[RMDB]
RNA sequence: GGGAACGACUCGAGUAGAGUCGAAAAGGAAGCCCGCUUUAUUCACUGGGGUCGACAGCUCUGGGGAGAAAAGGGAGGAUCGGAUGGGAAGAGUAUAUCCCAUGGGAAUCCCUGGGUUCCCCUCGUGUAAGACCGUAGUUCGCUACGGUCAAAAGAAACAACAACAACAAC
Reactivity to DMS in 0.01 (KOAc 150mM, MgCl2 10mM, bicine 150mM(pH8.5), 24C), signal-to-noise 9, nucleotides 027 to 129: g040g020a080a100g030c060c020c060g030c080u020u010u020a060u040u030c010a000c060u000g000g000g000g000u000c050g040a120c220a110g000c040u030c050u020g000g010g030g000a050g020a060a070a100a020g030g020g020a070g000g010a160u050c110g000g000a040u000g030g020g000a000a100g030a200g040u030a110u030a110u030c010c000c000a030u010g010g030g000a300a080u030c010c000c020u040g000g030g080u050u010c000c010c010c050u020c070g030u020g010u000a120a130
Reactivity to 2A3 in 0.01 (KOAc 150mM, MgCl2 10mM, bicine 150mM(pH8.5), 24C), signal-to-noise 2, nucleotides 027 to 129: g090g010a050a030g040c000c020c010g030c020u110u150u110a190u100u140c050a050c100u070g010g010g000g040u040c030g050a040c030a040g010c010u050c040u080g010g000g020g000a050g060a000a060a010a010g030g010g010a030g010g010a070u090c020g060g070a020u020g010g010g000a040a010g070a030g240u080a050u030a040u110c010c000c000a010u030g020g020g010a020a040u020c000c000c020u020g000g000g020u040u020c000c010c010c000u010c020g050u090g030u040a100a040